[RMDB]
Structure probing data (2A3 and DMS) for a 177-nucleotide construct. Source: RMDB library RFMREP, as collected in RNAgym.

RNA sequence: GGGAACGACUCGAGUAGAGUCGAAAAACCUAGGACGAGGACAUGGCAUCCUAUUACCAGCCAUUGCACGAAAUUAAUAUGAUGCCACGUCCUCAUACUAGAUGAAACAACCACAUCAUAUCACGGGGAUAAGUCAUUUCUUCGGAAAUGACUUAUCAAAAGAAACAACAACAACAAC
Reactivity to 2A3 in 0.01 (KOAc 150mM, MgCl2 10mM, bicine 150mM(pH8.5), 24C), signal-to-noise 3, nucleotides 027 to 126: a000c010c000u000a010g000g010a010c050g020a000g010g020a000c000a000u010g030g040c000a010u020c010c010u000a020u000u030a030c070c060a030g050c060c060a230u080u300g050c120a020c150g100a020a100a040u080u010a020a020u020a020u060g020a010u000g000c010c010a010c010g000u040c010c000u000c000a000u000a000c000u000a000g030a040u150g060a040a100a040c020a020a050c020c010a070c000a100u150c050a050u120a030u300c060a050c120g050g020g020
Reactivity to DMS in 0.01 (KOAc 150mM, MgCl2 10mM, bicine 150mM(pH8.5), 24C), signal-to-noise 3, nucleotides 027 to 126: a030c070c000u000a000g020g010a140c210g000a020g000g010a030c010a040u000g000g000c000a010u000c000c030u000a010u000u000a050c260c080a120g010c080c200a170u020u020g020c190a090c090g000a080a120a110u000u000a010a010u000a010u000g000a010u000g000c010c010a010c030g020u000c000c000u000c000a000u010a040c010u000a010g000a060u000g020a100a080a090c160a070a130c040c020a060c120a090u010c070a040u000a070u010c070a090c130g010g010g010
Reactivities are given for positions 27 through 126. The reactions ran in a buffer of 150 mM KOAc, 10 mM MgCl2 and 150 mM bicine (pH 8.5), at 24 C. Values are in units of 0.01, from 0 to 300, in steps of 10. The 2A3 profile rests on 2,586 reads. The DMS profile rests on 2,433 reads. For DMS the reverse transcriptase was MarathonRT.